An RNA of 177 nucleotides, treated with DMS and 2A3 and read out base by base.
The 2A3 profile rests on 1,723 reads.
DMS adducts were read by reverse transcription with MarathonRT.
Reactivities are given for positions 27 through 126.
The data come from the RNA Mapping Database (RMDB), library OK2TST.
[RMDB]
RNA sequence: GGGAACGACUCGAGUAGAGUCGAAAAUCUGACAUUGUGGGGUGCUCCGAAGAAAAUCAAGUUCACGAUCUGCUCAAAGUUUAGGGGAGAUACCUUUAAAUCAGUAACUUUUUUCUUUAUCCUCGUGCAUCGUUUAAGGGUUCGCCCUUAAACGAUGAAAAGAAACAACAACAACAAC
Reactivity to DMS in 0.01 (KOAc 150mM, MgCl2 10mM, bicine 150mM(pH8.5), 24C), signal-to-noise 2, nucleotides 027 to 126: u000c020u000g000a100c080a080u010u010g060u010g000g000g030g030u000g010c110u010c100c070g010a050a070g000a030a010a050a050u000c200a040a060g010u000u000c060a080c140g000a090u000c070u000g000c120u000c080a050a100a120g010u000u000u000a050g000g020g000g000a120g010a080u010a090c030c000u000u000u000a040a060a050u010c040a100g010u010a040a060c020u000u020u000u000u010u000c020u010u000u010a090u020c020c020u000c070g030u000g000
Reactivity to 2A3 in 0.01 (KOAc 150mM, MgCl2 10mM, bicine 150mM(pH8.5), 24C), signal-to-noise 2, nucleotides 027 to 126: u020c010u030g050a040c030a130u130u080g020u130g100g010g050g000u060g010c040u020c080c030g020a020a000g000a020a040a050a020u170c080a010a060g000u050u040c080a010c050g040a070u040c020u130g070c050u030c060a100a130a060g000u030u070u080a030g000g040g050g000a100g040a090u210a160c000c000u050u100u060a010a050a010u060c020a010g060u040a010a050c000u030u080u030u000u040u050c000u010u130u020a080u080c020c020u020c020g030u080g040